Conditions: 150 mM KOAc, 10 mM MgCl2 and 150 mM bicine (pH 8.5), 24 C. The record gives the reactivity of an RNA of 177 nucleotides to DMS and 2A3. 2A3 adducts were read by reverse transcription with SuperScript II with manganese. Values cover nucleotides 27 to 126.
RNA sequence: GGGAACGACUCGAGUAGAGUCGAAAAAUUGUGCGGUCUCUGAGAGAGGAGAACCUGUCUGAGAGAGCUUACCGCUUUUCAUAGUGGCUCUCUGAGAGACUCUCAGGCUCCUCUCGUUCCCAACCAACUUGACUCAUAGUUUCGACUAUGAGUCAAGAAAAGAAACAACAACAACAAC
Reactivity to DMS in 0.01 (KOAc 150mM, MgCl2 10mM, bicine 150mM(pH8.5), 24C), signal-to-noise 2, nucleotides 027 to 126: a060u020u000g010u000g010c060g000g000u010c090u000c070u010g000a160g010a020g000a030g010g000a010g000a060a060c020c000u000g010u000c010u000g000a020g010a020g000a030g010c060u000u000a030c080c040g010c050u000u000u010u010c240a100u000a090g010u000g020g010c010u000c000u000c000u000g010a040g020a070g000a140c170u000c150u010c050a030g000g000c000u000c000c000u000c010u000c000g010u010u000c000c000c010a090a130c200c120a070a150
Reactivity to 2A3 in 0.01 (KOAc 150mM, MgCl2 10mM, bicine 150mM(pH8.5), 24C), signal-to-noise 3, nucleotides 027 to 126: a020u130u110g040u050g060c050g010g040u050c010u010c060u230g030a050g010a010g000a000g080g000a030g020a160a270c010c020u020g090u000c020u100g030a040g000a000g000a000g030c030u080u110a060c020c020g060c020u100u130u080u060c130a120u160a080g080u040g070g020c000u000c010u000c020u020g000a020g000a000g000a030c020u080c030u020c130a010g010g000c020u010c000c000u050c000u000c000g000u020u000c010c000c000a010a010c020c010a040a030